[RMDB]
Structure probing data (DMS and 2A3) for a 177-nucleotide construct. The RNA was probed in 150 mM KOAc, 10 mM MgCl2 and 150 mM bicine (pH 8.5) at 24 C. For 2A3 the reverse transcriptase was SuperScript II with manganese.
RNA sequence: GGGAACGACUCGAGUAGAGUCGAAAAUCGAUGCGGAUCGUACUGCAUACGAGAGUACCUCACAUGUACUAGCAUGCGUACAUGAUCACUGCGAUGGUACCUAGGAUCAGUAGACUAGACGUACAUACGGCGAAGACCGUUUCGACGGUCUUCGCCGAAAAGAAACAACAACAACAAC
Reactivity to DMS in 0.01 (KOAc 150mM, MgCl2 10mM, bicine 150mM(pH8.5), 24C), signal-to-noise 2, nucleotides 027 to 126: u000c030g000a110u000g000c040g000g000a050u000c210g000u010a060c040u000g000c020a030u000a130c020g000a070g020a160g010u000a050c000c020u010c130a300c160a030u000g020u000a000c050u010a250g010c080a150u040g020c160g000u010a000c000a040u000g010a050u010c110a070c160u010g000c050g010a100u000g000g030u000a020c000c000u000a050g000g000a060u020c030a090g000u010a050g040a160c050u000a030g000a160c110g000u000a050c060a060u010a020
Reactivity to 2A3 in 0.01 (KOAc 150mM, MgCl2 10mM, bicine 150mM(pH8.5), 24C), signal-to-noise 2, nucleotides 027 to 126: u030c030g040a060u030g000c030g030g030a070u070c050g070u110a140c040u070g110c020a010u070a230c080g020a010g000a010g170u020a010c010c000u080c010a090c010a040u070g000u030a030c040u020a070g150c060a070u100g000c020g040u000a000c000a060u110g030a040u110c100a080c110u190g100c040g050a010u130g010g030u000a000c010c000u020a020g000g040a060u050c050a080g130u150a030g060a070c050u020a010g020a040c040g040u000a010c050a050u130a070